RNA sequence: GGGAACGACUCGAGUAGAGUCGAAAAGGGGGCGUCUGGUGGAAGUCAUAGGUGCGCAACCGUGUCGAGCGAAAGCGAAGCGCCGUAAGGCUUCGGGGACGGGUGAGCCGGCGGCCAGCGGCGAAGCCCACUGGCUUCAUUUCGAUGAAGCCAGUGGAAAAGAAACAACAACAACAAC
Reactivity to 2A3 in 0.01 (KOAc 150mM, MgCl2 10mM, bicine 150mM(pH8.5), 24C), signal-to-noise 7, nucleotides 027 to 126: g020g000g000g010g010c010g030u040c060u060g060g030u070g040g030a040a020g020u020c010a070u080a130g050g000u070g020c030g000c030a050a060c040c010g020u040g070u120c070g040a030g010c040g030a110a040a010g020c030g040a130a010g050c020g010c010c020g040u070a070a090g010g000c000u020u020c020g010g000g000g020a030c040g000g000g030u050g010a030g030c000c010g010g020c010g010g000c030c010a020g010c010g000g000c040g010a030a020g010c010
Reactivity to DMS in 0.01 (KOAc 150mM, MgCl2 10mM, bicine 150mM(pH8.5), 24C), signal-to-noise 6, nucleotides 027 to 126: g010g000g000g000g010c100g000u010c060u020g020g020u000g010g000a050a050g010u020c040a080u010a100g010g020u020g000c050g020c060a090a130c130c030g020u010g000u010c090g010a180g020c060g010a080a100a160g010c030g000a120a130g010c030g010c020c020g000u020a070a120g000g000c010u000u000c030g000g000g000g010a090c090g000g010g000u000g000a200g000c020c020g000g000c060g010g000c020c040a090g000c040g000g000c050g000a070a110g010c080